RNA sequence: GGGAACGACUCGAGUAGAGUCGAAAAGCGUACUACGAGGUCACCAGAGGCAUCGAUCUAUACCGAGCUAGUCCCAAAUAGGACUAGCGGCGUAUAGGGAGCCUCUGCAAGUCCUCGUAUCGCAAAAGUAACAUCUUCCUUCGGGAAGAUGUUACAAGCGGAACAAGAAGUUCGCUUCUUGUUCCGCAAAAGAAACAACAACAACAAC
Reactivity to 2A3 in 0.01 (KOAc 150mM, MgCl2 10mM, bicine 150mM(pH8.5), 24C), signal-to-noise 1, nucleotides 027 to 156: g040c010g000u120a060c030u020a020c060g000a040g000g010u040c020a150c130c000a020g000a000g010g000c030a260u100c130g030a020u000c040u000a000u000a000c010c050g010a040g000c000u000a000g040u020c050c000c000a170a300a200u300a060g000g000a000c000u020a000g040c010g000g000c130g010u050a000u000a010g000g010g010a000g000c000c020u010c000u000g030c050a050a120g000u030c000c000u020c000g000u000a010u060c000g010c010a120a000a000a010g010u020a000a000c000a000u040c030u000u000c000c000u030u110c150g070g000g000a000a000g010a000u000g000u000u000a000c000a000a000